Conditions: 150 mM KOAc, 10 mM MgCl2 and 150 mM bicine (pH 8.5), 24 C. The record gives the reactivity of an RNA of 177 nucleotides to 2A3 and DMS. The DMS profile rests on 3,122 reads. For DMS the reverse transcriptase was MarathonRT. High 2A3 reactivity points to a flexible backbone, as in loops and unpaired stretches.
[RMDB]
RNA sequence: GGGAACGACUCGAGUAGAGUCGAAAAGAAAGUAGCGAACAAAGCUGGACAGGAAGAAGGUCCAGCGACUUCUUCCGAAGAGCAUCCCCAUCUACGAUGCUCAAGUAGGUGGAGCUACGAAAAGAAAGGGUAUACGUAACUUCGGUUACGUAUACCCAAAAGAAACAACAACAACAAC
Reactivity to 2A3 in 0.01 (KOAc 150mM, MgCl2 10mM, bicine 150mM(pH8.5), 24C), signal-to-noise 2, nucleotides 027 to 126: g090a050a050a010g000u000a000g000c070g000a030a070c040a260a190a000g000c000u000g000g000a000c000a100g250g030a080a030g130a110a030g040g010u000c010c010a000g000c010g020a000c020u040u000c010u090u050c030c000g020a080a030g000a010g010c000a000u000c050c030c000c040a020u110c050u020a100c160g010a010u050g090c000u000c000a000a020g000u030a010g000g000u010g010g000a000g000c020u010a000c000g080a000a080a110a000g170a020a080a010
Reactivity to DMS in 0.01 (KOAc 150mM, MgCl2 10mM, bicine 150mM(pH8.5), 24C), signal-to-noise 3, nucleotides 027 to 126: g000a180a060a090g000u000a000g040c020g020a050a140c240a020a110a060g000c010u000g000g030a100c010a020g000g000a090a050g000a130a120g010g020u000c000c050a010g010c010g000a030c150u030u010c020u000u000c000c000g000a160a160g030a020g000c000a000u000c020c110c080c190a050u040c220u020a080c100g000a040u030g040c000u000c110a020a030g000u000a010g000g000u000g000g010a250g000c000u000a000c010g020a060a090a040a070g000a070a130a110